[RMDB]
Description:
This 207-nucleotide RNA was probed chemically with 2A3 and DMS. For 2A3, 851 sequencing reads were counted.

RNA sequence: GGGAACGACUCGAGUAGAGUCGAAAACUCAUCUUCGACAAAGGGCGGCAGUCCUCAGUACUCUUACUCUUUUCUGUAAAGAGGAGACUGCUGGACCUUCCGCCCAAGUUCGAGAUGGGCCUCAGUUCCGAGCGAAGAGACGAGACGGGGAGGGAUCGAAGCUAGAUAGCUUCGGCUAUCUAGCUUCAAAAGAAACAACAACAACAAC
Reactivity to 2A3 in 0.01 (KOAc 150mM, MgCl2 10mM, bicine 150mM(pH8.5), 24C), signal-to-noise 2, nucleotides 027 to 156: c000u020c000a010u040c050u300u200c000g000a010c080a130a130a070g050g030g000c040g000g020c000a010g020u000c000c040u010c030a040g010u250a300c040u020c030u100u140a300c000u070c040u070u170u090u200c220u300g150u300a030a010a010g000a010g070g000a000g000a000c020u010g040c030u010g030g010a030c000c020u160u020c000c010g000c000c060c010a010a000g010u020u000c010g010a000g020a000u000g000g000g000c000c010u080c040a060g060u190u050c010c010g020a030g000c040g030a050a050g060a040g000a030c090g020a020g040a040c020g040g030g020g020a000g000g000g020a010u250c170
Reactivity to DMS in 0.01 (KOAc 150mM, MgCl2 10mM, bicine 150mM(pH8.5), 24C), signal-to-noise 2, nucleotides 027 to 156: c000u010c080a060u000c020u030u010c060g040a090c110a120a190a170g000g000g050c010g030g020c300a180g030u010c010c000u010c040a030g040u000a130c060u000c040u000u030a300c030u000c010u020u000u000u010c270u040g020u000a010a030a060g040a050g020g010a090g000a080c020u000g040c150u010g030g030a040c040c010u010u020c010c020g000c000c000c040a000a030g010u000u040c000g030a010g000a020u010g010g010g000c020c060u000c090a130g010u000u000c030c000g000a120g010c150g010a110a130g000a160g000a110c000g000a090g000a060c060g000g020g020g010a120g010g040g000a110u010c060